[RMDB]
RNA sequence: GGGAACGACUCGAGUAGAGUCGAAAAUGCAAGUAGUGCUAUUGUUGGAAUCACCGUACCUAUUUAGGUUUACGCUCCAAGAUCGGUGGAUAGCAGCCCUAUCAAUAUCUAGGAGAACGGUGCUAUGAAAACGGUAUUGGCUUCGGCCAAUACCGAACUUCUUGACAGGCUUCGGCCUGUCAAGAAGAAAAGAAACAACAACAACAAC
Reactivity to 2A3 in 0.01 (KOAc 150mM, MgCl2 10mM, bicine 150mM(pH8.5), 24C), signal-to-noise 1, nucleotides 027 to 156: u150g000c020a050a000g150u070a020g030u170g110c060u070a060u030u130g090u040u030g000g050a000a040u200c020a010c010c010g030u060a000c000c060u030a170u240u180u300a090g000g050u080u000u040a030c060g000c030u000c000c000a060a060g030a060u030c100g000g280u050g010g080a000u010a010g040c100a020g000c000c010c000u040a000u000c000a040a020u000a020u150c030u010a070g000g040a020g000a010a010c000g000g000u030g000c050u100a070u110g010a060a000a110a000c030g020g000u020a000u000u000g030g010c000u030u090c230g060g000c000c010a000a000u000a000c000c000g000a000a000
Annotation:
Chemical mapping of a 207-nucleotide RNA with 2A3. The data come from the RNA Mapping Database (RMDB), library M2RFPK.